This 177-nucleotide RNA was probed chemically with DMS. The RNA was probed in 150 mM KOAc, 10 mM MgCl2 and 150 mM bicine (pH 8.5) at 24 C.

RNA sequence: GGGAACGACUCGAGUAGAGUCGAAAAUGUUAGUGGUUGAAUCCGUGUUGCUAGCAGGCAUUUAGGUGACAGUCGGACCCUCAAAGGAUUCACCAGCAAUCUACACAAAUCCUUUUGAAGGGAGUGGUAAGACCACGGUGUUCGCACCGUGGUCUUAAAAAGAAACAACAACAACAAC
Reactivity to DMS in 0.01 (KOAc 150mM, MgCl2 10mM, bicine 150mM(pH8.5), 24C), signal-to-noise 1, nucleotides 027 to 126: u000g010u000u010a150g090u010g000g000u000u010g040a000a000u000c000c010g010u000g000u020u000g020c010u000a110g020c200a090g010g010c090a050u000u010u000a040g000g000u010g000a090c100a030g050u000c070g020g000a150c160c000c020u010c070a030a110a170g000g000a020u000u000c050a060c000c090a080g000c070a080a070u020c090u050a020c070a010c090a150a090a130u000c020c000u000u000u000u010g000a110a050g000g000g000a060g010u000g000g010
The data come from the RNA Mapping Database (RMDB), library OK2TRN.